[RMDB]
RNA sequence: GGGAACGACUCGAGUAGAGUCGAAAAGUCAGGUCGUUGAAGGCGUCGUCAAGAACAUCACCGAUUACGGUGCGUUCGUCGACCUCGGCGGCAUUGACGGUCUCCUGCACGUGACCGACAUGGCAUACAUCCUAGCAGGUUUCGACCUGCUAGGAUGAAAAGAAACAACAACAACAAC
Reactivity to 2A3 in 0.01 (KOAc 150mM, MgCl2 10mM, bicine 150mM(pH8.5), 24C), signal-to-noise 4, nucleotides 027 to 126: g010u000c010a010g010g020u000c000g020u030u020g090a120a030g110g060c100g060u010c010g000u040c090a130a120g010a010a000c000a090u160c010a000c020c000g110a110u170u300a210c070g000g000u000g010c020g000u000u010c000g010u020c000g000a050c000c010u010c010g020g000c000g000g000c040a180u010u060g010a000c010g000g010u010c030u000c000c000u030g000c050a060c090g030u030g040a050c010c010g140a290c130a190u060g010g000c010a020u040a050
Reactivity to DMS in 0.01 (KOAc 150mM, MgCl2 10mM, bicine 150mM(pH8.5), 24C), signal-to-noise 4, nucleotides 027 to 126: g010u000c010a020g000g010u000c020g030u000u010g010a050a060g010g020c190g020u000c010g020u000c030a130a120g000a030a040c020a110u010c000a020c000c010g020a300u010u000a100c070g040g010u000g020c300g010u000u000c010g000u000c020g030a060c050c050u010c000g020g020c000g010g000c020a040u010u000g010a020c020g010g000u000c070u000c010c050u000g000c060a120c110g010u010g000a070c040c040g010a110c050a050u020g000g010c030a060u020a200